RNA sequence: GGGAACGACUCGAGUAGAGUCGAAAAAAGACUAGCCCCAUUCAGGAAUCAUGAGCUAUGCUUUCUGCAACAAUAAUACUUACUUGCUAAUCACUCAGGCUAUUAUAUAAAUGCCACUUAUAUGAAUACAUUGAGAGGUGGGCAUGAAAAUGGCCAAGAUAAUGGCGUGGUUCGCCACGCCAUUAUCAAAAGAAACAACAACAACAAC
Reactivity to 2A3 in 0.01 (KOAc 150mM, MgCl2 10mM, bicine 150mM(pH8.5), 24C), signal-to-noise 2, nucleotides 027 to 156: a040a030g160a030c070u030a010g050c010c010c040c020a070u050u070c000a010g000g080a070a040u020c000a050u120g090a000g090c090u180a010u080g010c000u070u010u050c120u060g070c030a060a030c070a060a110u200a250a050u080a140c070u150u080a030c020u070u050g000c000u150a030a010u120c030a030c100u140c010a000g000g000c050u020a020u160u070a050u020a030u030a140a200a000u040g000c000c000a000c010u110u020a080u000a030u190g080a090a030u130a220c030a030u060u180g080a100g010a010g140g200u110g050g050g050c030a030u050g000a000a000a000a030u010g010g000c020c010a020a000
The record gives the reactivity of an RNA of 207 nucleotides to 2A3. Values cover nucleotides 27 to 156. Conditions: 150 mM KOAc, 10 mM MgCl2 and 150 mM bicine (pH 8.5), 24 C. The 2A3 profile rests on 497 reads.